[RMDB]
RNA sequence: GGGAACGACUCGAGUAGAGUCGAAAAUGAAGGCUCGGACGAAAUAUUCGGUGGCUAUCUAUAUUUCGCACAAGCACCUUCUGCUGCAGAAUUUCACACCGAAUCUGUGCAACGUGUCAAGAACUAACCGAUAGGUACGUUUCGACGUACCUAUCGGAAAAGAAACAACAACAACAAC
Reactivity to DMS in 0.01 (KOAc 150mM, MgCl2 10mM, bicine 150mM(pH8.5), 24C), signal-to-noise 3, nucleotides 027 to 126: u020g000a060a000g000g000c080u000c140g000g000a080c000g000a050a020a020u010a040u000u000c110g000g020u000g000g060c090u010a030u020c030u010a060u000a050u020u000u000c010g050c300a050c120a070a060g020c060a110c070c010u010u000c030u000g000c070u010g000c030a040g010a050a070u010u020u000c080a070c040a030c090c100g040a000a040u020c080u000g010u020g000c150a050a100c110g000u000g040u000c010a090a200g010a100a130c100u050a010a300
Reactivity to 2A3 in 0.01 (KOAc 150mM, MgCl2 10mM, bicine 150mM(pH8.5), 24C), signal-to-noise 2, nucleotides 027 to 126: u140g000a030a000g050g000c000u000c000g000g050a060c030g000a020a020a060u170a100u030u060c100g000g030u100g110g000c080u170a100u000c040u020a010u010a040u100u040u030c020g020c000a070c020a120a000g010c020a080c000c000u070u090c020u050g100c030u050g030c030a030g010a080a060u090u070u170c070a080c010a070c080c020g020a030a000u060c040u020g040u010g020c010a060a050c120g040u050g000u080c030a050a090g020a140a000c050u040a040a030